The record gives the reactivity of an RNA of 177 nucleotides to DMS and 2A3.
For 2A3 the reverse transcriptase was SuperScript II with manganese.
RNA sequence: GGGAACGACUCGAGUAGAGUCGAAAAGAUAUGGACUAUUGUAGGGAGCUGCCAUUCGGAAACGAAUGUCAGCGACGAUCUACACUGUAGUCCUAAGUCAAAAGUCGUAAAGUUCGCUUUACGACAAGCAUUUUAGAAACUUCGGUUUCUAAAAUGCAAAAGAAACAACAACAACAAC
Reactivity to DMS in 0.01 (KOAc 150mM, MgCl2 10mM, bicine 150mM(pH8.5), 24C), signal-to-noise 2, nucleotides 027 to 126: g000a030u000a080u010g000g010a020c000u000a060u000u010g010u000a010g010g010g020a030g010c000u000g010c090c000a020u000u010c000g010g000a010a000a020c000g000a000a010u000g000u000c000a010g000c000g010a040c280g010a080u010c000u000a010c010a060c300u020g020u010a010g010u000c000c000u010a020a170g000u010c000a080a090a200a190g000u010c000g010u010a000a010a020g030u000u040c280g000c020u010u000u000a000c000g000a000c020a040a080
Reactivity to 2A3 in 0.01 (KOAc 150mM, MgCl2 10mM, bicine 150mM(pH8.5), 24C), signal-to-noise 2, nucleotides 027 to 126: g020a000u010a010u070g000g000a010c020u020a060u270u180g000u010a040g000g000g060a010g000c000u000g000c040c000a000u010u000c000g000g000a030a010a000c010g010a000a010u000g000u010c010a000g000c000g000a000c010g010a020u000c000u050a010c050a030c110u200g210u300a020g010u000c000c000u010a000a000g010u010c000a050a000a080a180g020u020c000g000u000a000a000a000g020u050u240c300g050c100u000u010u020a000c000g000a010c010a000a010

High 2A3 reactivity points to a flexible backbone, as in loops and unpaired stretches.